[RMDB]
RNA sequence: GGGAACGACUCGAGUAGAGUCGAAAAGUGGUUUGUAAGCAUGCAGUGCGUCGUUGGCCGGCACUUUAAUCUCGGUUGAUCCAAUUUUAACUGGCGAAAAUAACUACGCUCUCGCUGCUUAAUCGAAGCACAGUAGAUUGAAGCUUAAUCCUUACACCACACGGUGUUAGUUCGCUAACACCGUGUGAAAAGAAACAACAACAACAAC
Reactivity to DMS in 0.01 (KOAc 150mM, MgCl2 10mM, bicine 150mM(pH8.5), 24C), signal-to-noise 2, nucleotides 027 to 156: g020u000g000g000u000u000u000g000u000a060a040g030c040a040u020g090c030a060g000u000g000c040g000u000c040g020u000u010g010g000c070c030g000g000c090a070c100u010u010u010a030a070u000c050u000c060g020g020u010u000g010a080u010c050c020a040a090u000u010u000u010a010a070c060u000g000g030c020g010a070a080a110a130u000a040a070c060u000a050c030g020c030u010c030u010c070g100c010u000g000c020u000u000a010a010u000c020g000a010a060g050c040a070c030a110g000u000a040g010a180u000u000g030a030a270g010c040u010u000a120a200u000c040c020u000u020a060c020a270c070
Reactivity to 2A3 in 0.01 (KOAc 150mM, MgCl2 10mM, bicine 150mM(pH8.5), 24C), signal-to-noise 4, nucleotides 027 to 156: g040u030g030g150u020u040u080g050u070a020a000g010c010a020u300g000c020a020g010u000g000c000g020u010c010g010u000u030g080g000c000c000g010g000c020a040c030u060u040u040a060a060u030c140u080c200g010g030u080u190g080a060u070c010c030a050a040u030u030u040u080a240a250c020u020g010g000c030g040a050a100a040a060u220a070a010c010u020a010c000g000c000u000c000u010c080g000c000u010g000c000u010u000a010a010u130c020g020a010a000g000c030a040c030a110g040u080a040g010a180u050u130g080a090a010g020c030u050u110a050a050u050c020c010u030u070a060c030a030c010
Background: An RNA of 207 nucleotides, treated with DMS and 2A3 and read out base by base. It was measured as part of the RMDB library RSTRND. The RNA was probed in 150 mM KOAc, 10 mM MgCl2 and 150 mM bicine (pH 8.5) at 24 C. For DMS, 2,612 sequencing reads were counted.